[RMDB]
Conditions: 150 mM KOAc, 10 mM MgCl2 and 150 mM bicine (pH 8.5), 24 C. Structure probing data (2A3) for a 207-nucleotide construct.

RNA sequence: GGGAACGACUCGAGUAGAGUCGAAAAGAAAGAUUUCUAUCCAGAGAGGUGGAGGGACUGGCCCUAUGAAACCUCGGCAACAUUAUUGUGCCAAUUCCAGCAAGCGAUAGCUUGAAAGAUAGGAAAAAACAGGUUGCGCGCUUCGGCGCGCAACCAACACUAAUCGUACGUUCGCGUACGAUUAGUGAAAAGAAACAACAACAACAAC
Reactivity to 2A3 in 0.01 (KOAc 150mM, MgCl2 10mM, bicine 150mM(pH8.5), 24C), signal-to-noise 1, nucleotides 027 to 156: g050a030a110a020g050a020u020u020u020c000u040a070u040c040c040a030g070a020g000a000g140g010u000g000g020a020g000g010g020a020c040u050g040g000c000c000c000u190a300u070g020a020a010a010c010c000u020c010g000g060c020a070a100c020a110u120u300a140u300u300g030u010g010c010c000a000a030u100u010c060c020a010g000c020a000a000g000c040g110a120u110a110g020c020u010u010g020a100a040a000g000a020u000a050g000g020a020a000a000a090a000a020c050a020g020g000u040u000g050c030g030c030g020c040u040u090c210g100g010c000g010c000g000c000a000a000c000c000a000a000